[RMDB]
RNA sequence: GGGAACGACUCGAGUAGAGUCGAAAAUAUUUCGCGCCAUUGUAGCUCAGUGCUAGAGCGCUUCACUCGUAUAAAAAUACUGCCAUGAAGAGGUCCGCGGUUGAAUCCCGCGUGGUGGCAAAAAAAAUGAUCAAAGUCAAUUCGUUGACUUUGAUCAAAAAGAAACAACAACAACAAC
Reactivity to DMS in 0.01 (KOAc 150mM, MgCl2 10mM, bicine 150mM(pH8.5), 24C), signal-to-noise 1, nucleotides 027 to 126: u020a100u010u000u010c070g010c270g020c010c030a040u000u010g020u010a140g010c000u000c030a090g000u000g010c050u010a020g000a020g020c020g000c020u000u000c020a090c120u000c130g000u000a020u020a010a170a080a030a120u000a050c060u000g060c090c090a050u000g020a020a020g000a050g010g000u000c030c010g010c000g000g010u000u000g000a090a300u000c160c010c000g000c030g020u020g020g000u000g000g000c040a000a010a000a000a060a040a100a100
This 177-nucleotide RNA was probed chemically with DMS. The RNA was probed in 150 mM KOAc, 10 mM MgCl2 and 150 mM bicine (pH 8.5) at 24 C. It was measured as part of the RMDB library M2PK90.